[RMDB]
RNA sequence: GGGAACGACUCGAGUAGAGUCGAAAAUGUAAGUAGUGCUAUUGUUGGAAUCACCGUACCUAUUUAGGUUUACGCUCCAAGAUCGGUGGAUAGCAGCCCUAUCAAUAUCUAGGAGAACUGUGCUAUGAAAACGGUAUUGGCUUCGGCCAAUACCGAACCAGUUAAACUUGUUCGCAAGUUUAACUGGAAAAGAAACAACAACAACAAC
Reactivity to DMS in 0.01 (KOAc 150mM, MgCl2 10mM, bicine 150mM(pH8.5), 24C), signal-to-noise 2, nucleotides 027 to 156: u000g040u000a080a150g000u000a070g040u000g030c040u000a040u010u000g030u000u000g010g020a120a090u010c040a060c020c010g030u000a100c030c010u000a210u010u000u020a070g020g010u000u000u000a050c060g000c040u020c030c030a070a100g010a020u000c080g040g050u000g030g000a080u010a050g020c040a150g000c130c060c000u000a060u000c060a100a180u010a080u000c040u010a120g000g030a140g030a050a080c050u000g000u000g000c040u000a070u000g000a090a100a080a190c020g010g000u000a020u010u010g000g000c040u000u000c300g010g010c010c020a010a010u000a020c010c000g000a030a020
Reactivity to 2A3 in 0.01 (KOAc 150mM, MgCl2 10mM, bicine 150mM(pH8.5), 24C), signal-to-noise 5, nucleotides 027 to 156: u200g020u090a010a100g030u070a010g050u020g050c030u040a030u050u120g080u050u070g050g040a080a070u130c020a040c020c010g040u050a030c000c010u090a190u230u170u210a020g010g000u010u080u050a020c020g020c010u000c020c010a040a030g010a030u050c040g000g040u030g040g040a010u030a010g040c060a010g020c040c000c000u030a040u080c030a060a060u020a020u170c020u020a030g010g010a020g020a030a010c060u090g030u040g070c020u030a020u170g110a060a090a040a010c010g000g000u000a000u000u000g000g000c000u010u030c200g070g000c000c010a000a000u000a000c000c000g000a000a010